[RMDB]
RNA sequence: GGGAACGACUCGAGUAGAGUCGAAAAAACUACUUCUUCGGAAGUAGUUAUUGCGUGGGUGUAAUAAGCCCAAGGUGCCAGGUUCGACCCUUGCUGGGCGCAUCACCGACCGAUUCGUCGGUCGGAACUACGUAGAAGUCUUCGGACUUCUACGUAGAAAAGAAACAACAACAACAAC
Reactivity to 2A3 in 0.01 (KOAc 150mM, MgCl2 10mM, bicine 150mM(pH8.5), 24C), signal-to-noise 1, nucleotides 027 to 126: a010a010c000u010a000c000u000u000c000u020u040c300g050g000a000a000g000u000a010g010u000u020a140u070u090g050c060g030u060g010g040g020u090g010u040a110a100u100a210a030g020c020c020c020a000a040g070g010u070g030c010c000a000g000g030u060u140c080g080a150c000c020c000u000u100g020c030u040g010g030g030c030g000c000a050u100c050a020c010c000g000a000c030c010g000a010u040u020c200g060u000c000g060g000u000c000g010g000a000a030
Reactivity to DMS in 0.01 (KOAc 150mM, MgCl2 10mM, bicine 150mM(pH8.5), 24C), signal-to-noise 3, nucleotides 027 to 126: a010a010c000u000a010c000u010u000c000u000u030c220g030g000a010a000g010u000a000g010u000u000a010u000u000g010c120g020u010g000g010g000u000g000u010a090a070u020a140a170g000c010c000c020a060a070g020g030u000g010c000c050a130g010g010u000u000c060g000a170c040c010c000u000u000g030c050u000g000g010g020c040g010c060a080u010c100a200c010c000g000a030c000c000g000a040u000u000c180g000u000c000g000g000u000c000g000g000a050a080
Background: This 177-nucleotide RNA was probed chemically with 2A3 and DMS. For DMS the reverse transcriptase was MarathonRT. The DMS profile rests on 3,127 reads. Reactivities are given for positions 27 through 126. The RNA was probed in 150 mM KOAc, 10 mM MgCl2 and 150 mM bicine (pH 8.5) at 24 C. It was measured as part of the RMDB library M2PK50. The 2A3 profile rests on 3,066 reads.